[RMDB]
RNA sequence: GGGAACGACUCGAGUAGAGUCGAAAAUCAUAGCUUCACCAGCGCGACCUGGUCCUCCACGAGCUGGCCCGCGGCCGCGAGCUCAGCUUUUACCUUCCCGCCCACCUCCUCGCCCAGGUACACCGAACAUCGGUAAACCGUUCGCGGUUUACCGAUGAAAAGAAACAACAACAACAAC
Reactivity to DMS in 0.01 (KOAc 150mM, MgCl2 10mM, bicine 150mM(pH8.5), 24C), signal-to-noise 2, nucleotides 027 to 126: u000c080a150u020a160g010c050u000u000c060a100c050c040a060g020c060g010c060g040a110c040c010u010g010g010u010c020c010u000c030c060a080c150g000a030g030c020u000g000g010c010c020c030g010c070g020g070c200c160g000c050g000a020g020c000u020c010a060g000c020u000u000u010u000a070c110c090u000u000c020c000c010g000c040c020c010a080c030c010u000c010c030u000c050g010c040c020c020a060g030g010u010a100c110a060c040c090g010a040a180
Chemical mapping of a 177-nucleotide RNA with DMS. The reactions ran in a buffer of 150 mM KOAc, 10 mM MgCl2 and 150 mM bicine (pH 8.5), at 24 C. It was measured as part of the RMDB library M2PK90.